Source: RMDB library RNAMAK, as collected in RNAgym. The record gives the reactivity of an RNA of 207 nucleotides to DMS and 2A3. Reactivities are rounded to 0.1 and cut off at 0 and 3. For 2A3, 12,103 sequencing reads were counted.
RNA sequence: GGGAACGACUCGAGUAGAGUCGAAAAGCCAACGAUUCGUCGUUGGCAAAGCGUACUACGCUAGAGGGUUGCAUGACGUUGAUCAGCUCCCAAAUAGGAGCUGGGAGUCAUGACCUACCCACCUAGCGUAUCGCAAAGUUCGUACUUCGGUACGAACCUUACUCUAAAGAUUCGUCUUUAGAGUAAGAAAAGAAACAACAACAACAAC
Reactivity to DMS in 0.01 (KOAc 150mM, MgCl2 10mM, bicine 150mM(pH8.5), 24C), signal-to-noise 4, nucleotides 027 to 156: g020c000c000a020a020c000g000a040u000u010c300g000u000c000g040u010u000g010g010c000a000a010a060g000c010g030u000a070c120u000a010c010g030c000u000a020g010a300g010g010g000u000u000g000c020a030u000g000a020c010g020u000u000g010a080u010c000a010g010c000u010c000c000c010a030a150a190u000a070g020g010a030g020c010u010g010g000g010a060g010u000c010a010u010g000a020c070c040u000a040c010c020c010a130c070c000u000a010g010c000g000u000a000u000c050g020c020a110a110a100g020u000u000c000g020u000a010c000u000u010c280g040g010u000a010c000g000a000a010c020
Reactivity to 2A3 in 0.01 (KOAc 150mM, MgCl2 10mM, bicine 150mM(pH8.5), 24C), signal-to-noise 7, nucleotides 027 to 156: g000c000c000a010a000c000g010a020u040u120c240g040u000c000g020u170u020g000g000c030a000a000a050g000c020g010u060a090c070u000a000c040g000c000u010a010g030a030g030g000g000u010u040g010c000a000u000g010a010c010g250u300u020g010a020u010c010a000g000c000u010c010c030c020a150a300a120u300a070g000g000a000g000c000u000g000g000g000a010g000u010c000a000u010g010a030c000c010u020a020c010c000c010a160c060c000u000a000g000c000g000u000a010u090c000g000c010a070a010a040g000u000u000c000g000u010a000c010u040u090c290g080g000u000a000c000g000a000a000c000